Structure probing data (2A3 and DMS) for a 207-nucleotide construct. As a SHAPE reagent, 2A3 marks flexible, mostly unpaired nucleotides at the ribose 2'-OH. 2A3 adducts were read by reverse transcription with SuperScript II with manganese. For 2A3, 4,655 sequencing reads were counted. The reactions ran in a buffer of 150 mM KOAc, 10 mM MgCl2 and 150 mM bicine (pH 8.5), at 24 C. The DMS profile rests on 5,249 reads.

RNA sequence: GGGAACGACUCGAGUAGAGUCGAAAAACGUAUUCUCACUUAGGUCAGAAUUUGUGUGCAGAAAUUCAAGUACCACAGUAUAACAUGAUGCAUUCUAGAGUGAAUUGGGAACAUGUAGCUAGUCCAAAUAUAUCUACACCAGUAUUUAGUGGAAGAAGUUAUUCACUAGGUUCGCCUAGUGAAUAACAAAAGAAACAACAACAACAAC
Reactivity to 2A3 in 0.01 (KOAc 150mM, MgCl2 10mM, bicine 150mM(pH8.5), 24C), signal-to-noise 7, nucleotides 027 to 156: a000c040g050u090a070u080u040c040u000c010a040c050u060u130a050g030g030u050c040a050g020a110a080u040u110u090g090u010g030u040g020c020a010g080a080a080a040u080u070c050a090a050g050u040a070c020c030a040c050a040g070u140a060u050a190a040c060a060u090g040a050u070g070c010a020u080u060c030u090a050g010a020g120u060g050a100a050u100u060g020g010g010a050a020c020a050u070g030u070a010g020c050u030a030g020u030c040c010a010a060a010u140a010u020a020u020c010u040a020c030a020c030c020a010g030u040a140u090u200u140a110g020u050g040g050a060a050g070a090a010
Reactivity to DMS in 0.01 (KOAc 150mM, MgCl2 10mM, bicine 150mM(pH8.5), 24C), signal-to-noise 3, nucleotides 027 to 156: a090c070g000u010a060u010u000c020u000c010a110c120u000u000a110g040g000u010c060a130g010a040a080u000u000u000g040u000g020u000g040c030a100g010a020a080a120u000u010c060a050a140g040u010a120c050c030a050c020a070g010u010a080u000a070a080c070a080u000g020a110u000g010c010a080u000u000c050u010a090g010a130g050u000g000a040a130u010u000g020g020g030a060a060c050a070u000g020u000a110g040c080u010a120g020u010c060c040a060a030a120u000a080u010a050u000c030u000a040c020a030c020c000a110g030u000a060u000u000u000a040g010u000g010g010a050a070g000a110a120